[RMDB]
RNA sequence: GGGAACGACUCGAGUAGAGUCGAAAACUUGUUUACAAUGCAUAUCAAUUCAUAAGUCCUCACUAUUUUGAAUUACUUAUUUAUGGACCUAAUUAUUUCCUAACACCAAUGAGUGUAACUCGGCUCAUAAAUCAUAAAACUUCGGUUUUAUGAUUUAAAAAGAAACAACAACAACAAC
Reactivity to DMS in 0.01 (KOAc 150mM, MgCl2 10mM, bicine 150mM(pH8.5), 24C), signal-to-noise 5, nucleotides 027 to 126: c080u000u000g000u000u000u010a090c090a070a100u000g010c060a050u000a090u000c060a070a090u000u000c040a040u000a060a090g000u000c140c080u000c110a070c100u010a070u020u000u000u000g010a070a050u010u010a110c040u000u010a060u000u000u010a060u000g000g000a050c060c050u010a060a060u000u000a070u010u000u010c020c020u000a070a100c150a060c100c090a080a090u010g000a040g030u000g000u000a050a040c090u000c060g010g020c020u000c020a090
Reactivity to 2A3 in 0.01 (KOAc 150mM, MgCl2 10mM, bicine 150mM(pH8.5), 24C), signal-to-noise 3, nucleotides 027 to 126: c020u030u030g050u100u120u060a060c080a160a030u080g030c010a020u030a050u220c020a070a070u070u100c010a030u020a110a060g040u010c020c000u050c040a050c030u070a150u090u190u070u040g040a030a070u090u050a070c010u050u120a090u120u150u010a100u130g010g010a000c000c000u040a090a070u180u050a100u060u040u030c000c000u010a060a000c010a010c090c020a060a080u100g000a060g050u000g010u010a040a010c020u010c080g050g000c010u000c020a070